[RMDB]
Source: RMDB library OK2TST, as collected in RNAgym. Structure probing data (DMS and 2A3) for a 177-nucleotide construct. For DMS the reverse transcriptase was MarathonRT. The 2A3 profile rests on 43,247 reads. The RNA was probed in 150 mM KOAc, 10 mM MgCl2 and 150 mM bicine (pH 8.5) at 24 C.
RNA sequence: GGGAACGACUCGAGUAGAGUCGAAAACUGUUCAAGCCGCACGAUCGCGAGGUCAUUGCGGUUGUCCUUGGCCUUGCGGGCGGCCAGCUCGUAAUACAGCUUGCCACUGGUCAGCAGGAUCCGGCUGGACACUAUUAACAUUCGUGUUAAUAGUGUCAAAAGAAACAACAACAACAAC
Reactivity to DMS in 0.01 (KOAc 150mM, MgCl2 10mM, bicine 150mM(pH8.5), 24C), signal-to-noise 9, nucleotides 027 to 126: c040u000g010u010u010c090a120a110g010c010c020g020c090a140c180g010a090u010c010g010c060g010a040g010g010u000c010a040u000u000g000c030g020g020u000u010g010u000c010c010u000u000g010g000c020c010u000u000g010c010g010g000g010c030g000g000c020c050a020g010c020u000c060g010u000a100a080u010a150c210a040g000c030u000u000g010c020c030a130c070u000g000g010u000c070a090g010c050a080g010g000a060u000c070c050g000g010c040u000g010
Reactivity to 2A3 in 0.01 (KOAc 150mM, MgCl2 10mM, bicine 150mM(pH8.5), 24C), signal-to-noise 9, nucleotides 027 to 126: c020u030g060u130u070c080a080a020g010c010c010g050c030a080c120g120a170u150c010g010c010g020a010g000g010u010c020a020u010u060g020c060g170g090u060u110g000u040c000c000u000u020g000g000c000c000u000u010g000c000g030g020g000c020g000g010c000c000a000g000c010u070c030g050u050a050a020u110a130c030a020g010c000u020u040g010c010c020a110c080u080g010g050u090c040a050g020c020a020g060g040a030u020c030c020g040g000c040u040g060